[RMDB]
RNA sequence: GGGAACGACUCGAGUAGAGUCGAAAAGCUUGUUUGCAUUUGCAAUUAUUCUGGCGGUUUGCUGUAGGAGGGGGAGAAGAAGGAAAAGGACCCCUUCCGAUCCUAUGGAGAUGAUUCGAAAGGUAUCGUACAAAUUAGGUUUCGACCUAAUUUGUACAAAAGAAACAACAACAACAAC
Reactivity to 2A3 in 0.01 (KOAc 150mM, MgCl2 10mM, bicine 150mM(pH8.5), 24C), signal-to-noise 7, nucleotides 027 to 126: g010c030u070u070g040u100u110u060g030c020a120u050u050u290g010c020a050a070u100u040a090u150u140c040u030g040g010c020g040g000u060u100u100g040c030u040g010u060a030g010g010a010g020g010g010g010g030a060g020a050a020g040a040a080g070g060a060a100a000a010g040g020a020c000c000c000c000u000u010c000c000g000a000u000c000c000u060a100u120g040g010a070g010a060u140g020a040u070u090c040g050a080a040a010g100g010u080a060u160c070
Reactivity to DMS in 0.01 (KOAc 150mM, MgCl2 10mM, bicine 150mM(pH8.5), 24C), signal-to-noise 9, nucleotides 027 to 126: g010c070u000u000g010u000u000u000g010c020a240u000u000u000g020c040a060a050u010u000a100u010u010c050u010g000g010c050g010g000u000u010u010g010c060u000g010u000a100g010g010a040g010g010g000g000g000a100g010a130a120g010a070a090g010g010a060a060a120a160g010g000a180c060c040c020c010u000u000c000c000g000a110u000c020c010u000a070u010g010g010a080g000a080u000g000a100u000u000c040g000a060a080a090g000g010u000a050u010c130
Chemical mapping of a 177-nucleotide RNA with 2A3 and DMS.
For 2A3, 16,056 sequencing reads were counted.
Source: RMDB library OK2TRN, as collected in RNAgym.